[RMDB]
RNA sequence: GGGAACGACUCGAGUAGAGUCGAAAAAGCAAAACCCCACUACACAGUCUGCAAGAUUCUGAAACAUUGCUUUGACCACUCUUCCUGAGUUCAGUGGCACUCAACAUGAGUCAAGAGCAUCCUGCUUCUACCAUGUGGAUUUGGUCACAAGGUUUAACACUUACAAAGACUUCGGUCUUUGUAAGUGAAAAGAAACAACAACAACAAC
Reactivity to 2A3 in 0.01 (KOAc 150mM, MgCl2 10mM, bicine 150mM(pH8.5), 24C), signal-to-noise 8, nucleotides 027 to 156: a000g070c060a060a050a040a070c030c020c040c040a030c040u160a030c060a020c010a030g050u030c040u110g050c050a070a060g020a180u150u090c060u140g050a120a100a020c060a100u050u090g010c000u080u020u050g020a040c020c010a030c030u020c020u080u040c010c050u100g020a030g030u070u090c050a030g020u030g040g000c010a020c010u030c010a020a060c020a080u090g020a040g090u050c090a100a020g010a000g040c020a050u150c030c090u070g010c010u080u020c000u040a030c010c010a020u050g010u030g030g010a040u040u020u110g040g010u000c000a010c000a050a040g040g020u030u050u050a100a010
Reactivity to DMS in 0.01 (KOAc 150mM, MgCl2 10mM, bicine 150mM(pH8.5), 24C), signal-to-noise 3, nucleotides 027 to 156: a090g030c040a050a030a100a150c040c000c000c020a080c040u000a090c040a070c050a090g000u000c050u000g010c050a100a130g000a080u000u010c070u000g010a090a060a090c040a200u000u000g010c020u000u000u010g010a190c050c030a060c030u000c040u000u000c050c020u000g000a080g010u000u000c030a120g030u000g020g030c050a070c140u010c020a060a080c020a040u000g000a060g020u000c110a090a080g000a030g010c010a100u010c130c080u000g000c000u000u000c000u000a080c010c020a060u010g010u010g020g000a170u000u000u000g020g000u010c040a020c000a020a080g020g010u000u000u010a070a170